Structure probing data (DMS) for a 177-nucleotide construct. DMS adducts were read by reverse transcription with MarathonRT. Conditions: 150 mM KOAc, 10 mM MgCl2 and 150 mM bicine (pH 8.5), 24 C.
RNA sequence: GGGAACGACUCGAGUAGAGUCGAAAAGAUAUGGAGCUCCUAAGCCGCUAUUACACACAGCUUAAGUGGUCGGAAACGACCACGGAGGCUGUGUGUAAUAGAACUACGGUAUGGAGCUCCUAAGUCACCAAUGGAUAGUCUUCGGACUAUCCAUUGGAAAAGAAACAACAACAACAAC
Reactivity to DMS in 0.01 (KOAc 150mM, MgCl2 10mM, bicine 150mM(pH8.5), 24C), signal-to-noise 1, nucleotides 027 to 126: g010a030u000a300u000g000g000a020g010c010u000c000c000u010a140a280g000c040c010g020c000u010a020u000u000a000c010a000c030a000c010a040g000c000u000u000a120a120g000u000g000g000u000c000g030g000a160a120a300c040g000a010c070c000a000c000g000g000a130g000g000c020u000g060u010g020u000g000u000a000a000u010a000g000a040a000c160u000a300c040g000g000u000a300u000g000g000a000g010c000u000c040c000u000a030a040g000u000c020a300